[RMDB]
RNA sequence: GGGAACGACUCGAGUAGAGUCGAAAAUCCUGCACCUUUAUCAAUGGAGGAACUCGACUUUGCUGUGGGUCCCAAAGGGACCUUAGGUGCAGACAGUUACCGGCGGUGAAGUGUGAGGUGAGGUUGGACACGUAAACUACUUCGGUAGUUUACGUGUAAAAGAAACAACAACAACAAC
Reactivity to DMS in 0.01 (KOAc 150mM, MgCl2 10mM, bicine 150mM(pH8.5), 24C), signal-to-noise 2, nucleotides 027 to 126: u000c020c000u010g000c050a010c040c020u000u010u000a080u000c040a040a300u000g030g010a130g000g020a050a050c070u000c080g030a090c110u000u000u000g000c040u010g010u000g000g010g000u000c000c000c000a080a080a150g010g010g000a020c000c010u000u000a040g010g020u000g010c080a030g020a130c120a030g010u010u000a090c020c030g010g000c290g010g010u000g000a010a030g000u000g020u000g020a080g020g010u000g000a090g010g010u000u010g000g000
An RNA of 177 nucleotides, treated with DMS and read out base by base. Reactivities are given for positions 27 through 126. For DMS the reverse transcriptase was MarathonRT. The RNA was probed in 150 mM KOAc, 10 mM MgCl2 and 150 mM bicine (pH 8.5) at 24 C. It was measured as part of the RMDB library RFMREP.